[RMDB]
RNA sequence: GGGAACGACUCGAGUAGAGUCGAAAAGGGAGAUGAGUGCGUAUCCAGAGGAGCACUUCCUCCAGGACAUGUUGCCGGGCAAGGUCGUGCUCGAGCUUGUGCAACCCCUCAUCGACCCAUAGGAGCCCACCCUGCGAGACUUCGGUCUCGCAGGGUGAAAAGAAACAACAACAACAAC
Reactivity to 2A3 in 0.01 (KOAc 150mM, MgCl2 10mM, bicine 150mM(pH8.5), 24C), signal-to-noise 1, nucleotides 027 to 126: g010g040g000a040g010a000u020g000a000g020u200g090c070g020u100a040u120c000c010a000g000a000g000g050a000g070c050a000c000u060u000c010c000u090c020c000a060g040g000a060c130a180u200g050u040u130g040c000c000g050g030g000c030a060a040g070g040u070c040g100u070g080c040u030c040g030a000g050c020u030u000g000u170g090c030a060a030c000c000c000c030u020c030a000u010c010g230a300c000c010c000a020u110a050g080g080a100g050c030c020
Reactivity to DMS in 0.01 (KOAc 150mM, MgCl2 10mM, bicine 150mM(pH8.5), 24C), signal-to-noise 1, nucleotides 027 to 126: g030g000g010a300g020a040u000g000a000g020u000g040c060g060u000a210u000c010c000a100g050a010g020g000a060g010c250a080c110u000u000c060c000u000c000c060a130g050g000a070c030a040u000g010u000u000g010c010c010g000g010g010c080a080a050g000g000u000c130g000u010g020c080u000c010g000a170g000c020u010u000g060u010g020c110a080a060c010c180c100c040u000c010a010u000c010g030a160c000c000c000a100u000a110g000g000a150g000c000c030
The record gives the reactivity of an RNA of 177 nucleotides to 2A3 and DMS. 2A3 adducts were read by reverse transcription with SuperScript II with manganese. The reactions ran in a buffer of 150 mM KOAc, 10 mM MgCl2 and 150 mM bicine (pH 8.5), at 24 C. It was measured as part of the RMDB library OK2TST.